[RMDB]
RNA sequence: GGGAACGACUCGAGUAGAGUCGAAAAGCUGCUGUACUUGCUGACGUUGCUGCAUUUGUCUCAGAUGUUUUCGCUGCGGCUGCCGAUGCGGCUGCCGCCUUUUCCGACGCUGCCGCCGCAGUGGCUGCUCACGUAUAAAGUUCGCUUUAUACGUGAGAAAAGAAACAACAACAACAAC
Reactivity to 2A3 in 0.01 (KOAc 150mM, MgCl2 10mM, bicine 150mM(pH8.5), 24C), signal-to-noise 9, nucleotides 027 to 126: g010c010u030g000c010u030g030u070a100c030u080u090g020c020u030g040a050c030g100u110u070g020c020u020g010c010a040u030u050u120g090u020c030u010c060a040g030a120u080g080u050u070u050u080c050g010c050u050g000c000g020g000c020u020g000c010c010g080a120u160g050c050g020g000c010u020g010c010c010g000c000c000u080u080u050u020c030c020g020a030c030g000c030u020g000c010c020g020c010c010g000c010a020g020u020g050g000c010u030g010
Reactivity to DMS in 0.01 (KOAc 150mM, MgCl2 10mM, bicine 150mM(pH8.5), 24C), signal-to-noise 9, nucleotides 027 to 126: g020c020u000g010c010u000g010u010a070c080u010u000g010c040u000g010a090c090g010u010u000g010c040u000g000c040a060u010u010u010g010u000c040u010c050a080g000a080u010g010u010u010u010u010c080g020c080u000g010c030g010g000c020u000g010c020c080g010a120u030g020c040g010g000c010u000g010c040c040g010c010c030u000u000u010u000c090c040g000a070c090g010c040u000g000c020c070g010c050c080g000c030a030g000u000g010g010c030u010g010